An RNA of 177 nucleotides, treated with DMS and read out base by base. Source: RMDB library RFMREP, as collected in RNAgym.
RNA sequence: GGGAACGACUCGAGUAGAGUCGAAAAUUUAAACUGUUAGCCGCCAGCGGCUUGACCCGCUGUGGCCGCGGCGGCCUAGUUGUGACUGAAACGGCGGUAAAAACAUUCAUAGGUUCGCCUAUGAAUGGAUUUACCACCAGUUCGCUGGUGGUAAAUCAAAAGAAACAACAACAACAAC
Reactivity to DMS in 0.01 (KOAc 150mM, MgCl2 10mM, bicine 150mM(pH8.5), 24C), signal-to-noise 1, nucleotides 027 to 126: u000u010u010a040a050a110c070u000g010u000u000a090g000c000c000g000c010c010a060g030c000g020g010c030u000u000g010a300c150c020c020g010c020u010g000u000g010g000c000c000g000c040g010g000c000g000g010c020c000u000a020g030u010u010g030u000g010a220c050u010g000a090a040a040c030g010g000c040g030g000u000a050a100a070a100a110c000a030u000u010c000a000u000a010g000g000u000u030c280g030c020c010u000a010u010g000a000a020u010g010